Structure probing data (2A3 and DMS) for a 207-nucleotide construct. For DMS, 4,451 sequencing reads were counted. The 2A3 profile rests on 2,824 reads. DMS adducts were read by reverse transcription with MarathonRT. 2A3 adducts were read by reverse transcription with SuperScript II with manganese.

RNA sequence: GGGAACGACUCGAGUAGAGUCGAAAAUGCCCGUCCGCUCAUACGCUGGAGGGGAGUUUCAUCCAGCACAGCGCGAGCGGCCCGUGGGGAGGCGAGCAGGAUGGCACGUGUUAGGCGCUUGCGCGGACCUAUCGUGGUAUUGGAGCAUUAUGUUCCGCGUAAUAAAUACCUUCGGGUAUUUAUUACGAAAAGAAACAACAACAACAAC
Reactivity to 2A3 in 0.01 (KOAc 150mM, MgCl2 10mM, bicine 150mM(pH8.5), 24C), signal-to-noise 5, nucleotides 027 to 156: u050g020c000c000c010g040u040c010c010g000c000u020c010a060u100a270c020g000c000u010g020g010a040g020g030g080g010a020g020u060u190u250c120a110u030c010c000a010g020c010a010c000a010g000c010g010c030g030a010g000c000g010g020c000c010c000g010u040g000g020g000g000a020g030g070c010g010a040g010c020a020g040g090a090u140g110g030c020a060c180g080u140g090u170u150a090g070g000c040g000c050u040u070g000c080g020c020g040g060a040c000c020u070a080u200c030g040u130g060g030u100a110u090u150g030g000a090g040c050a030u070u050a080u300g060u020u000c010c010g000
Reactivity to DMS in 0.01 (KOAc 150mM, MgCl2 10mM, bicine 150mM(pH8.5), 24C), signal-to-noise 2, nucleotides 027 to 156: u000g010c000c000c010g020u000c010c010g050c010u020c010a140u000a060c040g010c000u010g020g030a220g000g030g000g010a090g030u000u010u000c190a200u000c010c000a040g000c040a280c050a080g000c010g050c040g000a050g050c030g030g010c050c030c040g020u000g030g040g030g010a160g010g000c020g000a110g000c040a060g000g030a090u000g030g000c020a060c040g020u020g020u010u000a090g030g010c010g020c050u000u000g020c100g040c050g020g000a070c000c010u000a050u000c050g020u000g010g010u000a100u000u010g020g010a090g020c010a120u000u000a120u000g000u000u000c000c000g020